[RMDB]
RNA sequence: GGGAACGACUCGAGUAGAGUCGAAAACUUCUUCUUUGUCUUCCGGAGCUCCGCCUCGAGUUCCUCCGCUUUCUUUCUUCCACUCACCCACUUCUCGAGAAUAUCUUCUCUUCCAUCGCGCUUCUUCGCAGAAGUAAAUGUUCGCAUUUACUUCUGCAAAAGAAACAACAACAACAAC
Reactivity to 2A3 in 0.01 (KOAc 150mM, MgCl2 10mM, bicine 150mM(pH8.5), 24C), signal-to-noise 2, nucleotides 027 to 126: c000u050u050c000u090u000c000u090u120u080g050u040c010u090u000c030c020g050g020a020g020c030u020c040c000g030c000c000u010c010g020a020g040u000u050c000c000u000c010c020g050c070u000u060u050c000u040u040u030c000u060u050c020c000a060c000u060c020a050c010c000c010a040c020u030u030c010u010c030g080a070g050a100a060u090a070u040c030u060u030c030u020c000u060u020c030c010a080u070c020g030c000g020c040u020u020c020u010u040c060
Reactivity to DMS in 0.01 (KOAc 150mM, MgCl2 10mM, bicine 150mM(pH8.5), 24C), signal-to-noise 2, nucleotides 027 to 126: c090u010u000c060u000u000c040u020u000u010g010u010c020u000u000c060c060g000g010a160g010c070u000c040c070g000c110c020u000c030g010a090g000u010u000c040c060u000c060c080g000c060u010u000u000c020u000u000u000c080u000u000c010c010a060c050u000c060a080c020c020c040a110c060u000u000c000u010c030g020a130g010a090a080u010a100u010c090u000u000c030u010c020u010u010c020c010a060u000c090g020c080g000c050u000u000c020u000u010c300